[RMDB]
RNA sequence: GGGAACGACUCGAGUAGAGUCGAAAACUCUUUUACUCGGCAUGAUACCACCGUUAUCGGGUCAACAGAGUAGUUGCAAGUGACAACAAUGCUCAGGGUUAUGCUCUCGCUGCCUAAUGGCGGUGCGCGGACGACUCAAUGUUCGCAUUGAGUCGAACCGAUGAGGUGGAUUCGUCCACCUCAUCGGAAAAGAAACAACAACAACAAC
Reactivity to 2A3 in 0.01 (KOAc 150mM, MgCl2 10mM, bicine 150mM(pH8.5), 24C), signal-to-noise 2, nucleotides 027 to 156: c080u120c030u010u110u070u160a200c130u100c040g050g020c060a010u090g050a020u100a260c010c030a010c000c010g060u070u040a040u100c010g000g020g010u010c030a020a000c030a020g040a000g080u080a000g020u000u020g050c040a240a110g050u150g100a120c000a110a000c030a020a100u060g000c010u030c000a000g100g040g000u150u090a030u130g000c020u060c000u000c020g020c010u010g060c000c000u180a300a190u300g000g000c010g020g020u070g040c110g000c050g020g050a110c030g000a000c000u000c000a000a000u010g000u020u000c140g000c130a000u000u010g000a020g000u000c020g010a000a010
Chemical mapping of a 207-nucleotide RNA with 2A3. The 2A3 profile rests on 657 reads. Values are in units of 0.01, from 0 to 300, in steps of 10. For 2A3 the reverse transcriptase was SuperScript II with manganese.